[RMDB]
This 177-nucleotide RNA was probed chemically with DMS and 2A3. DMS adducts were read by reverse transcription with MarathonRT.
RNA sequence: GGGAACGACUCGAGUAGAGUCGAAAAGGCGCUGUGCAGCGAGGCCCCUUAGGCGGCGGCCACGCUGUGGUCCCCGAGGUCCCGGAGCUGGCCCUGCGGGGCCCGGCGCUCAGAAGUGAUGAAUUGAUAUAUUCCCUUUCUUCGGAAAGGGAAUAUAAAAAGAAACAACAACAACAAC
Reactivity to DMS in 0.01 (KOAc 150mM, MgCl2 10mM, bicine 150mM(pH8.5), 24C), signal-to-noise 4, nucleotides 027 to 126: g020g020c000g020c010u000g030u010g010c030a000g000c010g000a050g010g010c000c020c010c020u010u030a160g010g030c220g010g000c200g020g010c000c000a050c000g010c000u010g010u010g000g000u000c010c010c000c000g000a060g000g000u000c020c010c050g000g010a130g020c120u020g000g000c120c010c010u000g010c010g010g020g010g000c020c030c070g000g000c000g010c000u020c100a080g010a100a170g000u010g000a110u000g010a100a190u010u010g000a190
Reactivity to 2A3 in 0.01 (KOAc 150mM, MgCl2 10mM, bicine 150mM(pH8.5), 24C), signal-to-noise 1, nucleotides 027 to 126: g000g060c030g000c000u070g050u160g060c010a000g000c000g030a010g000g000c030c000c000c000u040u200a170g120g070c110g040g080c120g030g000c060c000a000c000g000c000u010g020u020g000g000u150c000c020c020c000g010a090g000g000u030c020c000c000g060g020a140g000c210u150g000g010c000c000c000u120g190c040g000g050g010g020c000c000c000g000g000c000g040c010u000c030a180g000a210a030g100u070g020a090u130g030a060a220u060u070g050a000

Values cover nucleotides 27 to 126. Conditions: 150 mM KOAc, 10 mM MgCl2 and 150 mM bicine (pH 8.5), 24 C. Source: RMDB libraries RFM100 and RFMREP, as collected in RNAgym. For 2A3 the reverse transcriptase was SuperScript II with manganese.